Conditions: 150 mM KOAc, 10 mM MgCl2 and 150 mM bicine (pH 8.5), 24 C. Chemical mapping of a 207-nucleotide RNA with DMS and 2A3. It was measured as part of the RMDB library OK3TST.

RNA sequence: GGGAACGACUCGAGUAGAGUCGAAAAAUCUUCUCACAGGUAAGAUAGGAGAAGAUGCCUCUCUGACCUCUGUGUGCUUCUACCUCUGUGCUUAUGUCCUUCAUGUAAUGGGAAAAGAUGCUUCAACAUCAUACUCACGGGGCUGGGGGAGUUAUAACGACUAAUAAUACUUCGGUAUUAUUAGUCGAAAAGAAACAACAACAACAAC
Reactivity to DMS in 0.01 (KOAc 150mM, MgCl2 10mM, bicine 150mM(pH8.5), 24C), signal-to-noise 3, nucleotides 027 to 156: a050u010c010u000u000c020u010c010a120c060a190g040g010u000a080a100g010a130u000a060g010g010a040g010a040a060g010a070u000g030c020c020u000c080u000c020u010g000a080c030c020u000c030u000g040u000g020u000g000c020u000u010c030u000a100c050c010u010c030u010g040u000g000c050u000u010a060u000g020u000c040c010u010u010c040a110u010g040u000a070a080u000g010g000g000a050a090a130a210g020a040u000g010c020u000u000c140a140a080c030a030u000c030a140u010a140c020u000c000a040c050g000g000g030g030c070u010g020g000g010g020g010a070g030u000u000a110u000a070a250
Reactivity to 2A3 in 0.01 (KOAc 150mM, MgCl2 10mM, bicine 150mM(pH8.5), 24C), signal-to-noise 6, nucleotides 027 to 156: a000u010c010u030u010c010u010c000a140c040a060g140g120u200a160a050g040a210u180a110g070g040a030g020a050a020g020a050u050g020c010c000u020c010u010c040u060g110a170c000c020u020c030u040g000u010g010u020g070c020u070u020c020u050a070c010c010u030c030u060g040u050g080c040u120u100a050u160g060u060c010c030u030u060c040a050u080g050u150a160a070u100g030g020g000a020a100a020a060g020a020u020g030c030u140u170c030a060a080c000a030u030c000a020u070a110c020u020c020a010c040g000g000g020g000c010u040g020g000g010g010g010a030g010u060u100a160u110a140a030